The record gives the reactivity of an RNA of 207 nucleotides to 2A3. It was measured as part of the RMDB library OK3TST. The reactions ran in a buffer of 150 mM KOAc, 10 mM MgCl2 and 150 mM bicine (pH 8.5), at 24 C.
RNA sequence: GGGAACGACUCGAGUAGAGUCGAAAAUUGCAAUCUGGUAUUGUGAAGAUGGUUAGUCCUACUUCUAAAGUAGAACCUUGCGUUGUCAGUGUUACCUACGGUAAUAUGACAUUGAAUGGUCUUUGGUUGGAUGAUAAAGUCUACUGUCCUAGGCAUGCACCGACCCAUAUUUCGAUAUGGGUCGGUGAAAAGAAACAACAACAACAAC
Reactivity to 2A3 in 0.01 (KOAc 150mM, MgCl2 10mM, bicine 150mM(pH8.5), 24C), signal-to-noise 1, nucleotides 027 to 156: u060u120g000c020a010a010u000c010u180g000g040u140a040u110u090g010u040g060a060a010g020a080u100g000g080u010u080a050g040u020c020c010u000a060c000u060u060c010u120a130a070a130g040u040a020g080a040a020c000c000u030u130g000c020g040u040u050g030u120c040a080g090u020g030u120u000a000c000c000u010a050c130g000g000u000a010a040u000a050u050g050a030c030a040u010u060g050a060a040u050g050g000u040c020u050u040u070g020g020u070u010g030g000a030u040g020a060u200a050a080a000g000u030c010u000a000c000u090g040u000c020c040u040a010g000g010c020a020u150g010